[RMDB]
RNA sequence: GGGAACGACUCGAGUAGAGUCGAAAACACAUGUUCUCUGAGAUGGAGGGAAGGCAUGAGAAAAGGGGCUGUGUUUCCAAGAUAUUCAGGUGGAUAAGAGGCACAUUGAGAGAGUUCAAGUUGAGUUGACAUCCAUCAUCUCAAUAAAGGAGGGAAGUGAGGUAGUUGAAUUCGUUCAACUACCUCAAAAAGAAACAACAACAACAAC
Reactivity to DMS in 0.01 (KOAc 150mM, MgCl2 10mM, bicine 150mM(pH8.5), 24C), signal-to-noise 2, nucleotides 027 to 156: c020a070c070a120u000g010u010u000c020u000c020u020g000a190g000a080u000g020g030a130g010g000g030a080a010g000g020c040a070u000g020a040g000a030a100a130a080g000g010g010g040c030u000g000u000g020u000u000u000c040c030a180a140g000a070u010a110u010u000c050a090g030g010u000g020g000a120u000a040a120g020a100g030g000c050a020c030a080u020u000g000a070g000a100g010a160g020u000u000c040a070a170g000u000u000g000a020g020u000u000g000a070c070a140u010c210c090a160u000c000a030u000c010u020c030a020a050u000a030a080a210g000g000a070g000g050g000a060a080g020
Reactivity to 2A3 in 0.01 (KOAc 150mM, MgCl2 10mM, bicine 150mM(pH8.5), 24C), signal-to-noise 4, nucleotides 027 to 156: c070a000c010a030u140g020u090u080c060u000c020u050g120a070g020a130u070g040g030a030g010g010g010a030a040g020g000c060a050u130g020a040g050a090a080a020a030g020g000g010g000c020u010g020u010g020u040u090u010c020c000a050a020g040a090u140a060u110u150c040a030g040g030u040g020g040a030u020a110a070g020a040g010g000c030a010c020a100u060u120g000a020g000a000g010a020g060u070u080c040a090a000g040u040u080g000a010g010u010u010g020a020c010a060u050c050c000a020u000c050a030u000c010u010c010a030a040u100a110a080a050g030g010a010g030g020g040a020a080g090